This 177-nucleotide RNA was probed chemically with DMS.
For DMS the reverse transcriptase was MarathonRT.
RNA sequence: GGGAACGACUCGAGUAGAGUCGAAAAGAUAUGGAUAACUCAGCUCGUCUGUGAAGCAAAGUGGCUAAUCUAUUCGGAAACGAAUAGAUUAGCCACUUUGUGGAGACGGCUGAGGUUAUCCUAAGUCCUUAAUAGUAUCCUUCGGGAUACUAUUAAGAAAAGAAACAACAACAACAAC
Reactivity to DMS in 0.01 (KOAc 150mM, MgCl2 10mM, bicine 150mM(pH8.5), 24C), signal-to-noise 1, nucleotides 027 to 126: g000a120u020a300u000g010g020a010u000a010a020c000u000c010a010g000c010u040c030g010u000c000u010g000u010g000a160a260g000c000a000a000a000g060u000g020g000c000u010a000a020u000c000u000a020u000u000c000g020g000a060a060a300c030g050a040a010u000a010g010a050u000u000a000g020c000c010a000c000u000u000u000g000u000g010g000a000g010a000c020g020g000c000u000g000a000g010g000u010u000a000u000c000c000u000a030a140g000u000c040
Source: RMDB library TTRINS, as collected in RNAgym. The reactions ran in a buffer of 150 mM KOAc, 10 mM MgCl2 and 150 mM bicine (pH 8.5), at 24 C.